[RMDB]
RNA sequence: GGGAACGACUCGAGUAGAGUCGAAAAGGCGGCGCUUUCCUCAACGAUCGCCGUUUGCGCGUCGCCUCGCGCAACAAGCUGGUCGAUUCGGUCAUCGGCACCGGCAUUCCGCAUCUGGGGCGUGGCAUCGGUAAAAUAUGUUCGCAUAUUUUACCGAAAAAGAAACAACAACAACAAC
Reactivity to DMS in 0.01 (KOAc 150mM, MgCl2 10mM, bicine 150mM(pH8.5), 24C), signal-to-noise 9, nucleotides 027 to 126: g000g010c010g010g010c040g010c110u000u000u010c050c040u010c190a080a120c120g010a090u010c040g010c030c040g010u000u000u000g020c040g010c000g010u000c110g010c060c040u000c020g010c010g010c020a040a050c180a100a090g010c020u010g020g010u000c040g010a100u000u000c080g010g000u010c120a130u000c060g010g010c080a040c050c020g000g010c040a120u000u000c030c020g010c090a090u010c110u000g010g010g000g010c030g010u000g010g020c120a150
Reactivity to 2A3 in 0.01 (KOAc 150mM, MgCl2 10mM, bicine 150mM(pH8.5), 24C), signal-to-noise 6, nucleotides 027 to 126: g040g010c010g020g000c010g010c060u070u100u060c010c020u090c040a050a050c060g050a090u090c040g030c050c000g020u020u040u040g020c000g000c000g050u060c020g030c010c020u010c010g000c000g000c000a000a040c020a050a020g030c030u070g000g030u050c030g050a080u130u070c070g080g060u090c050a060u080c050g070g010c070a030c020c000g010g000c010a030u070u030c020c010g060c040a060u050c080u110g010g030g000g000c020g020u040g030g000c020a050